[RMDB]
RNA sequence: GGGAACGACUCGAGUAGAGUCGAAAAGAUAUGGAAUAUCGCAGAUGCCUACAUGAGGAGCAACAGCGUGGAUUCGGAAACGAAUCCCACGACAUGCUCCUUGGGCAUCUGCGAUAUUCCUAAGUCACCACAAUUAUAGGUUCGCCUAUAAUUGUGGAAAAGAAACAACAACAACAAC
Reactivity to DMS in 0.01 (KOAc 150mM, MgCl2 10mM, bicine 150mM(pH8.5), 24C), signal-to-noise 5, nucleotides 027 to 126: g020a060u010a300u010g000g000a030a010u000a010u000c000g010c000a000g000a010u000g000c000c000u000a180c300a220u050g020a020g020g010a030g010c000a050a110c270a200g010c010g020u010g000g010a070u000u010c000g010g010a130a110a260c010g020a000a000u000c170c000c010a000c000g000a070c140a180u000g010c000u000c010c000u000u000g000g010g010c020a000u010c000u000g010c000g000a000u000a000u000u010c000c000u000a010a040g000u000c030a300